Description: An RNA of 177 nucleotides, treated with 2A3 and read out base by base.
RNA sequence: GGGAACGACUCGAGUAGAGUCGAAAACACUCCGUGUGACUGCGUGCACUACCGCAAUCAAACCGGGAUCGACGCGGACGUGCGCCUGCUCUGUGGCCCCCGCCGCCCCGCCUACGCGGACUCGCAAGCAGCGCUAGGCUUUCGAGCCUAGCGCUGCAAAAGAAACAACAACAACAAC
Reactivity to 2A3 in 0.01 (KOAc 150mM, MgCl2 10mM, bicine 150mM(pH8.5), 24C), signal-to-noise 1, nucleotides 027 to 126: c040a080c040u040c000c000g030u030g000u000g120a050c110u040g000c030g120u000g070c050a080c040u220a220c120c000g010c000a000a180u160c140a100a010a070c160c000g000g050g060a030u050c210g000a000c030g060c090g000g040a000c020g030u130g000c020g070c070c000u000g000c120u000c010u030g090u140g090g000c000c000c000c000c000g000c070c120g000c010c000c000c010g030c070c000u190a150c130g000c140g120g200a140c000u020c040g050c040a070a090
It was measured as part of the RMDB library OK1LIB.
The reactions ran in a buffer of 150 mM KOAc, 10 mM MgCl2 and 150 mM bicine (pH 8.5), at 24 C.
2A3 is a SHAPE reagent: it acylates the 2'-hydroxyl of flexible nucleotides of all four kinds.
The 2A3 profile rests on 330 reads.